[RMDB]
This 177-nucleotide RNA was probed chemically with 2A3 and DMS.
RNA sequence: GGGAACGACUCGAGUAGAGUCGAAAAGGUGCCAGCAGCCGCGGUAAUUCCAGCUCGGCGAGCGUCGCGCGGCGCUGCUGCAGUUAAAACGCCCGUAGUUGGCCCCCCGCCGCCACGAGGAAACGGGACAGAAUUAUUUAUUCGUAAAUAAUUCUGUAAAAGAAACAACAACAACAAC
Reactivity to 2A3 in 0.01 (KOAc 150mM, MgCl2 10mM, bicine 150mM(pH8.5), 24C), signal-to-noise 4, nucleotides 027 to 126: g040g010u030g040c040c010a010g000c020a030g020c020c010g000c040g010g020u080a090a100u210u100c090c030a050g000c000u030c030g160g030c090g030a020g010c030g030u080c040g000c010g010c050g090g010c010g010c030u030g010c010u030g010c020a060g020u110u130a140a170a120a100c120g090c020c000c000g000u050a080g040u040u060g050g000c020c000c010c000c010c010g020c020c010g010c000c010a030c040g020a060g040g090a040a090a030c030g010g000g000
Reactivity to DMS in 0.01 (KOAc 150mM, MgCl2 10mM, bicine 150mM(pH8.5), 24C), signal-to-noise 3, nucleotides 027 to 126: g030g010u000g020c070c020a030g000c010a100g030c020c010g010c000g000g010u000a070a110u030u020c140c100a230g000c000u000c010g010g020c120g010a070g000c030g020u020c120g010c020g020c020g020g010c030g000c040u000g010c090u000g030c020a060g000u030u000a030a110a230a270c300g030c010c000c030g020u010a120g000u020u000g020g000c020c040c050c040c030c050g010c070c050g020c020c010a060c040g000a110g000g000a050a120a080c020g010g000g000
The 2A3 profile rests on 2,581 reads. Values cover nucleotides 27 to 126. 2A3 adducts were read by reverse transcription with SuperScript II with manganese. Conditions: 150 mM KOAc, 10 mM MgCl2 and 150 mM bicine (pH 8.5), 24 C. The data come from the RNA Mapping Database (RMDB), libraries RFM100 and RFMREP.